[RMDB]
RNA sequence: GGGAACGACUCGAGUAGAGUCGAAAAGAUAUGGACACGCCCUAGGGAGAAUGUGGUCGGAAACGACCAUACAUUCGAGGAUCUAGGGACGUGUCCUAAGUCAAAGAAGGUGGUUCGCCACCUUCAACUACUGCCUACUCUUCGGAGUAGGCAGUAGAAAAGAAACAACAACAACAAC
Reactivity to DMS in 0.01 (KOAc 150mM, MgCl2 10mM, bicine 150mM(pH8.5), 24C), signal-to-noise 2, nucleotides 027 to 126: g010a050u000a300u000g020g000a030c000a000c020g030c000c000c000u010a030g000g000g000a040g030a060a010u000g010u000g000g030u000c020g010g000a070a120a260c000g020a010c010c000a110u000a090c060a030u010u010c010g000a140g000g010a030u030c010u010a000g000g020g010a020c020g020u010g020u030c000c000u000a020a090g000u000c010a070a090a190g020a010a020g000g030u000g000g000u000u000c300g050c010c000a000c000c000u020u000c000a060a170
The record gives the reactivity of an RNA of 177 nucleotides to DMS. Values are in units of 0.01, from 0 to 300, in steps of 10. The DMS profile rests on 1,732 reads. The reactions ran in a buffer of 150 mM KOAc, 10 mM MgCl2 and 150 mM bicine (pH 8.5), at 24 C. DMS adducts were read by reverse transcription with MarathonRT. DMS (dimethyl sulfate) methylates the pairing face of unpaired adenines and cytosines.